[RMDB]
RNA sequence: GGGAACGACUCGAGUAGAGUCGAAAAGAUCUUGGACACAGUUUCCAGUUUUCUGAGCCUCCGUGUCCUCAUCUGUAAAAUGGGGAUGAUGAUAGCACCUCCCUCCCUGAGGCAAAUCUGGGGAGGAGGCCUACUGAAUUUUCGAAUUCAGUAGGCCAAAAGAAACAACAACAACAAC
Reactivity to 2A3 in 0.01 (KOAc 150mM, MgCl2 10mM, bicine 150mM(pH8.5), 24C), signal-to-noise 1, nucleotides 027 to 126: g030a010u020c050u080u120g000g000a000c020a020c080a270g100u060u170u000c020c000a010g000u040u050u060u060c040u090g040a020g010c000c000u010c010c000g050u050g000u000c000c000u000c000a010u000c010u210g300u300a060a040a020a000u000g000g000g000g040a010u030g010a020u010g020a040u100a080g030c050a070c030c010u070c010c000c010u050c020c000c030u030g070a030g080g000c070a070a060a100u090c050u050g000g000g000g000a000g000g000a020
Reactivity to DMS in 0.01 (KOAc 150mM, MgCl2 10mM, bicine 150mM(pH8.5), 24C), signal-to-noise 2, nucleotides 027 to 126: g020a020u010c030u000u000g020g010a020c060a150c170a190g000u000u040u000c000c020a100g010u020u000u000u000c010u010g020a210g010c020c000u020c070c030g020u020g000u000c010c010u000c020a000u000c040u000g000u020a050a070a140a030u000g010g000g010g010a020u000g000a020u000g000a110u000a090g000c180a160c040c020u020c050c010c020u000c020c000c010u000g020a020g000g050c140a060a080a060u020c080u010g010g000g000g000a030g030g010a050
Structure probing data (2A3 and DMS) for a 177-nucleotide construct. For DMS, 1,467 sequencing reads were counted. For 2A3, 1,264 sequencing reads were counted. For 2A3 the reverse transcriptase was SuperScript II with manganese.